[RMDB]
RNA sequence: GGGAACGACUCGAGUAGAGUCGAAAAUGAGGCUUUGCGUAAGUAUUAUGAAACUCUUUUCCCUUCCUGGAAAGGAAGUUCUCUCACCUGGAAUGAAGUUCAGAGUUGGCAUACGGCACAGCUAACAUCGAGGUCUAGGAUUCGUCCUAGACCUCGAAAAAGAAACAACAACAACAAC
Reactivity to DMS in 0.01 (KOAc 150mM, MgCl2 10mM, bicine 150mM(pH8.5), 24C), signal-to-noise 1, nucleotides 027 to 126: u010g000a290g020g010c010u010u010u000g010c000g030u000a100a060g070u000a040u000u000a160u020g010a110a000a010c020u000c000u000u000u000u000c010c040c020u010u000c020c020u000g000g000a060a110a030g000g000a030a020g020u000u000c070u000c030u000c060a200c060c010u000g060g030a010a050u010g010a040a230g030u010u000c060a010g000a090g010u010u000g010g000c100a060u000a040c060g000g020c030a020c080a060g000c010u000a050a120c190a150
Record summary
Chemical mapping of a 177-nucleotide RNA with DMS. For DMS the reverse transcriptase was MarathonRT. DMS (dimethyl sulfate) methylates the pairing face of unpaired adenines and cytosines. Reactivities are given for positions 27 through 126. Conditions: 150 mM KOAc, 10 mM MgCl2 and 150 mM bicine (pH 8.5), 24 C.